This 177-nucleotide RNA was probed chemically with DMS and 2A3. For 2A3, 4,007 sequencing reads were counted. DMS adducts were read by reverse transcription with MarathonRT.
RNA sequence: GGGAACGACUCGAGUAGAGUCGAAAACGAGGAUGUAUGGGGCGUUGCGGAAGGCGAGAAGUUGCGAGUGAGGACAAGCAACUGCCAAAGGUCCUCCAGCAAGGCGGCAGGAGCCUUCGAAGACGGAAUAAAUUAGCGAGUUCGCUCGCUAAUUUAUAAAAGAAACAACAACAACAAC
Reactivity to DMS in 0.01 (KOAc 150mM, MgCl2 10mM, bicine 150mM(pH8.5), 24C), signal-to-noise 6, nucleotides 027 to 126: c070g010a080g000g020a060u000g020u030a030u020g010g010g010g000c060g010u000u000g010c180g020g000a050a020g030g010c010g010a150g040a090a070g020u000u000g010c000g020a170g000u040g020a030g000g000a050c010a110a140g000c060a160a100c100u030g010c070c090a050a130a130g000g000u000c000c000u020c010c020a140g000c090a070a050g000g020c050g000g000c050a070g010g000a260g000c030c020u000u000c030g000a080a180g000a070c060g000g000a110
Reactivity to 2A3 in 0.01 (KOAc 150mM, MgCl2 10mM, bicine 150mM(pH8.5), 24C), signal-to-noise 5, nucleotides 027 to 126: c070g030a070g070g030a050u090g020u160a120u140g050g000g030g010c030g030u050u100g050c030g060g030a040a020g010g000c010g010a080g020a070a030g040u070u020g010c010g040a080g020u280g050a030g020g030a000c020a040a010g030c030a100a190c110u200g020c030c010a090a060a000g080g010u010c000c000u000c000c000a000g010c020a020a080g060g010c040g010g010c030a030g000g050a040g020c000c000u010u010c020g040a050a010g000a020c070g020g000a080